The data come from the RNA Mapping Database (RMDB), library M2RFPK. The record gives the reactivity of an RNA of 207 nucleotides to 2A3.
RNA sequence: GGGAACGACUCGAGUAGAGUCGAAAAAUAGAGAUUGGAGUCAUACAACCCCAGAAACCAUUCCUUAUACCUUGAGUAUUGCAGAAUUCAGUUUAGCGUGCAUGCUCUUGGCUAUUCUCAUAGUGAUAAAAUCUGUAGUCCUUCGGGACUACAGAAAGCUUCUCAUACACUUCGGUGUAUGAGAAGCAAAAGAAACAACAACAACAAC
Reactivity to 2A3 in 0.01 (KOAc 150mM, MgCl2 10mM, bicine 150mM(pH8.5), 24C), signal-to-noise 2, nucleotides 027 to 156: a000u060a000g010a000g000a000u050u040g070g010a020g030u080c060a080u080a240c130a150a060c050c000c000c020a020g060a100a050a040c000c010a050u080u110c020c010u080u090a090u060a080c000c000u000u000g000a000g030u030a010u150u110g000c010a030g020a210a120u060u140c050a100g270u120u140u210a110g110c060g040u010g010c000a000u010g000c000u000c000u000u020g000g060c000u020a020u120u000c030u010c060a130u080a150g010u050g080a060u120a090a070a030a090u000c000u020g000u000a000g000u000c000c000u040u040c150g060g000g000a000c010u000a000c000a000g000a000a000a000
2A3 adducts were read by reverse transcription with SuperScript II with manganese.
Values cover nucleotides 27 to 156.
The reactions ran in a buffer of 150 mM KOAc, 10 mM MgCl2 and 150 mM bicine (pH 8.5), at 24 C.